[RMDB]
RNA sequence: GGGAACGACUCGAGUAGAGUCGAAAAUGAUCAUUCGUGAUCAACAAUGAUAUGGAUUGGAACUGUGCGAGGAUCUGUACGUAACAUCUCUCGGAAACGAGAGUGGUACAGGGAGCACUAAGUACAAUCCUAAGUCUGGUGUCGGUUUCGACCGAAAGCAUGGGGUUGGAUUCGUCCAACCCCAUGCAAAAGAAACAACAACAACAAC
Reactivity to 2A3 in 0.01 (KOAc 150mM, MgCl2 10mM, bicine 150mM(pH8.5), 24C), signal-to-noise 1, nucleotides 027 to 156: u140g010a030u000c010a030u030u170c240g110u070g000a010u070c010a020a100c060a050a160u170g020a000u030a020u100g020g000a010u020u000g040g010a040a000c040u030g000u010g050c020g040a220g050g010a000u000c000u010g010u000a000c000g040u040a120a040c040a170u060c010u030c000u000c010g040g070a060a000a040c000g000a000g000a010g010u000g010g000u000a000c000a020g020g000g000a000g020c020a000c010u000a000a010g010u000a020c000a000a000u000c000c000u000a040a020g050u020c020u060g110g000u110g070u120c060g060g000u060u050u110c130g020a050c000c050g160a070a130a010